Description: Structure probing data (2A3) for a 177-nucleotide construct.
[RMDB]
RNA sequence: GGGAACGACUCGAGUAGAGUCGAAAACAAGGCUCAAGCUAUCAACGUUGCACGACUGGCCUGCAAUGACUUUGAGCAAGACUGCGUGAUGGUCUACAAGUCUCAGACUCACACGGCUGGCCUGAUGAAUGACGGGCCGAUUCGUCGGCCCGUCAUUAAAAGAAACAACAACAACAAC
Reactivity to 2A3 in 0.01 (KOAc 150mM, MgCl2 10mM, bicine 150mM(pH8.5), 24C), signal-to-noise 1, nucleotides 027 to 126: c080a030a020g020g000c000u020c080a030a030g000c020u170a100u090c130a090a060c150g040u010u040g000c030a020c120g090a170c220u060g000g080c030c000u030g000c000a000a180u050g040a030c040u030u000u130g000a080g070c000a020a020g050a020c020u040g180c090g200u150g130a180u140g000g000u000c010u010a000c000a070a000g050u060c000u040c090a160g000a180c000u020c050a000c000a000c000g130g020c000u000g000g000c030c000u080g040a020u060g110